An RNA of 177 nucleotides, treated with 2A3 and DMS and read out base by base. The data come from the RNA Mapping Database (RMDB), library OK1LIB. Reactivities are given for positions 27 through 126. The reactions ran in a buffer of 150 mM KOAc, 10 mM MgCl2 and 150 mM bicine (pH 8.5), at 24 C.
RNA sequence: GGGAACGACUCGAGUAGAGUCGAAAAGAAGGUGACGAACGUGAAGACCACCUCAGGUCGAGGAAACACAAGAUGAUGUGACAUCAACGUAACGAUCAGCUGAGAUCGACAGCAAAGUCACCGAAAAGGGUUACAUUCACUUCGGUGAAUGUAACCCAAAAGAAACAACAACAACAAC
Reactivity to 2A3 in 0.01 (KOAc 150mM, MgCl2 10mM, bicine 150mM(pH8.5), 24C), signal-to-noise 1, nucleotides 027 to 126: g240a000a000g070g000u000g030a010c000g010a180a000c050g000u120g000a060a000g020a020c000c050a070c000c040u030c010a120g000g020u090c000g070a130g000g070a170a020a000c030a000c000a060a140g010a070u140g020a080u120g000u000g050a040c000a020u000c000a100a020c020g070u140a110a000c000g000a000u030c040a000g130c070u150g000a010g000a110u000c000g030a000c060a010g010c070a120a080a000g000u000c060a000c000c000g020a000a000a000a000
Reactivity to DMS in 0.01 (KOAc 150mM, MgCl2 10mM, bicine 150mM(pH8.5), 24C), signal-to-noise 2, nucleotides 027 to 126: g010a170a120g000g000u000g000a010c000g000a090a080c140g000u010g000a080a110g000a030c000c170a010c250c010u050c130a090g000g000u000c030g000a070g010g010a100a040a060c050a010c280a000a300g000a060u110g000a030u050g000u000g040a130c100a060u000c100a040a010c170g140u000a110a210c100g000a000u000c010a040g000c110u000g040a030g020a050u000c020g000a090c080a300g000c050a040a020a050g000u000c000a010c000c000g000a010a120a030a230